[RMDB]
This 207-nucleotide RNA was probed chemically with 2A3. It was measured as part of the RMDB library VIROID.

RNA sequence: GGGAACGACUCGAGUAGAGUCGAAAAAUCGAAGAGCAUACCUAGCUGCGUUUCAACCUGCGUGGGUUGGGGCGGCUUAGCGGAUUAAUGAAAGUUCUACCCUAGUGGUACUUACCCCAUGCAAAGUCUGCGUGCAGGCGGGGUAUGUGCCUCUGGGCGGGCAUGAUAAGUUCGCUUAUCAUGCCCGAAAAGAAACAACAACAACAAC
Reactivity to 2A3 in 0.01 (KOAc 150mM, MgCl2 10mM, bicine 150mM(pH8.5), 24C), signal-to-noise 2, nucleotides 027 to 156: a020u130c040g040a010a010g060a020g100c090a050u110a270c010c010u010a020g000c010u000g000c030g010u010u000u170c000a000a000c010c010u130g100c220g230u300g050g010g000u010u000g000g000g000g020c000g040g000c030u040u040a040g000c030g000g050a000u110u110a050a100u230g140a110a030a010g090u050u000c070u090a110c000c000c000u030a020g010u000g170g000u000a000c000u010u000a000c000c000c000c010a050u110g040c140a070a070a070g040u090c060u060g040c120g210u080g010c020a000g070g150c000g010g010g000g000u000a000u000g000u000g000c000c000u010c000u020g000g000g010